[RMDB]
RNA sequence: GGGAACGACUCGAGUAGAGUCGAAAAGAUAUGGAUAUGGUCGCUUGGAUUUAUGGGAUCCCUCGGAAACGAGAACUCCCAUUGUCAGCGGAGAGUAUCCUAAGUCAAAGCUGACUUCGGUCAGCAACUAAUUACGUGCGUUCGCGCACGUAAUUAGAAAAGAAACAACAACAACAAC
Reactivity to 2A3 in 0.01 (KOAc 150mM, MgCl2 10mM, bicine 150mM(pH8.5), 24C), signal-to-noise 1, nucleotides 027 to 126: g060a020u110a040u190g030g020a010u030a020u070g160g040u050c030g000c140u150u250g180g010a060u300u300u130a000u110g000g000g060a000u070c090c030c000u000c000g000g050a080a090a050c030g000a000g020a020a060c020u030c000c030c000a000u010u030g000u000c020a000g000c020g030g000a120g000a010g060u000a000u000c000c000u020a250a020g000u050c110a210a060a070g000c000u000g010a010c020u030u060c250g060g000u010c000a000g010c010a010a010
Reactivity to DMS in 0.01 (KOAc 150mM, MgCl2 10mM, bicine 150mM(pH8.5), 24C), signal-to-noise 1, nucleotides 027 to 126: g020a040u000a300u020g000g000a030u000a000u010g000g000u000c000g050c020u000u010g010g000a040u010u010u010a000u000g000g000g000a040u000c080c050c000u000c000g000g000a080a140a120c010g010a010g010a100a080c060u000c010c000c000a020u000u000g000u000c010a020g020c020g010g010a070g000a160g010u010a020u000c000c020u000a090a200g000u000c030a070a100a180g000c010u000g000a030c000u000u010c180g060g020u000c000a040g020c010a060a040
Chemical mapping of a 177-nucleotide RNA with 2A3 and DMS. The RNA was probed in 150 mM KOAc, 10 mM MgCl2 and 150 mM bicine (pH 8.5) at 24 C. For DMS the reverse transcriptase was MarathonRT. Values cover nucleotides 27 to 126. The DMS profile rests on 1,204 reads.